Structure probing data (2A3 and DMS) for a 207-nucleotide construct. DMS adducts were read by reverse transcription with MarathonRT. Values cover nucleotides 27 to 156.

RNA sequence: GGGAACGACUCGAGUAGAGUCGAAAAGGGGUCUCGAGGGCAAAGCUAGGUCUUUUGACGCUCUGAAGCCUCCACGGAGCGAUAAGACCUAGAACUACUUUGCGCUCGAGACGGAGGCACCCAAAUACACGAAGGUACUUCGGUACCUUCGUGUAAAACAUACUAUCGGGUUCGCCCGAUAGUAUGUAAAAGAAACAACAACAACAAC
Reactivity to 2A3 in 0.01 (KOAc 150mM, MgCl2 10mM, bicine 150mM(pH8.5), 24C), signal-to-noise 4, nucleotides 027 to 156: g010g000g000g000u000c000u000c000g010a010g040g150g000c000a000a000a000g020c000u000a000g010g020u010c000u020u210u210u200g130a100c070g000c000u000c000u010g060a110a030g000c010c000u000c010c000a010c000g010g000a000g010c020g010a020u130a280a090g000a000c010c000u000a000g000a010a000c010u140a050c000u040u000u010g000c200g130c000u000c000g000a000g000a000c010g000g000a010g000g010c000a040c010c010c010a040a100a000u100a010c010a000c000g000a000a000g000g000u010a000c000u040u150c300g030g000u000a000c010c000u000u000c000g000u000g000u000a000a000a000
Reactivity to DMS in 0.01 (KOAc 150mM, MgCl2 10mM, bicine 150mM(pH8.5), 24C), signal-to-noise 2, nucleotides 027 to 156: g010g030g000g030u010c000u000c000g050a010g050g020g040c020a010a020a030g020c020u020a020g010g030u000c020u070u000u000u000g030a220c040g020c000u000c000u000g000a070a110g040c000c000u000c000c010a300c060g030g030a010g000c000g020a150u000a030a040g000a020c030c020u000a040g020a050a100c100u010a230c000u000u000u010g040c020g000c000u010c010g000a010g010a020c030g010g020a030g040g030c030a140c020c010c000a060a100a260u000a020c010a060c000g010a060a010g020g020u000a000c000u000u000c300g020g010u000a020c000c000u000u000c010g000u000g020u010a010a030a130